Structure probing data (DMS and 2A3) for a 177-nucleotide construct. For DMS the reverse transcriptase was MarathonRT. The 2A3 profile rests on 534 reads. It was measured as part of the RMDB library OK1LIB. For DMS, 1,832 sequencing reads were counted.
[RMDB]
RNA sequence: GGGAACGACUCGAGUAGAGUCGAAAAAACGUGAAGUAAAUGAAGUUAGAUCAAUCCAUGCAGAGUUGAUGAAAAUUCACGAUGAUAGUCUCACGUGUGAGCAGUUUAUAGCAUAUAUUAGAGAGAACCCUAACCGAGGAUUCGUCCUCGGUUAGGGAAAAGAAACAACAACAACAAC
Reactivity to DMS in 0.01 (KOAc 150mM, MgCl2 10mM, bicine 150mM(pH8.5), 24C), signal-to-noise 2, nucleotides 027 to 126: a020a070c000g030u030g000a030a000g010u010a180a060a040u010g030a090a080g010u010u010a060g000a040u010c000a070a020u010c010c110a080u020g000c250a070g000a110g000u000u010g000a050u000g000a050a150a130a060u020u000c010a030c070g000a060u030g020a030u000a100g000u020c060u000c000a040c000g000u000g030u010g000a090g070c060a080g020u070u040u030a050u010a090g020c090a000u000a090u010a040u000u000a010g030a050g000a100g000a080a190
Reactivity to 2A3 in 0.01 (KOAc 150mM, MgCl2 10mM, bicine 150mM(pH8.5), 24C), signal-to-noise 1, nucleotides 027 to 126: a000a000c000g000u000g000a000a000g030u100a040a050a150u180g040a100a000g010u170u080a060g080a040u060c000a000a000u060c010c030a100u140g000c070a010g010a000g120u020u010g050a000u000g090a020a000a030a230u020u020c000a000c000g050a000u110g030a190u110a010g070u010c000u000c000a040c040g000u020g000u040g110a000g000c000a000g060u080u300u200a070u180a010g000c060a050u140a000u010a080u240u140a050g000a010g000a000g000a090a120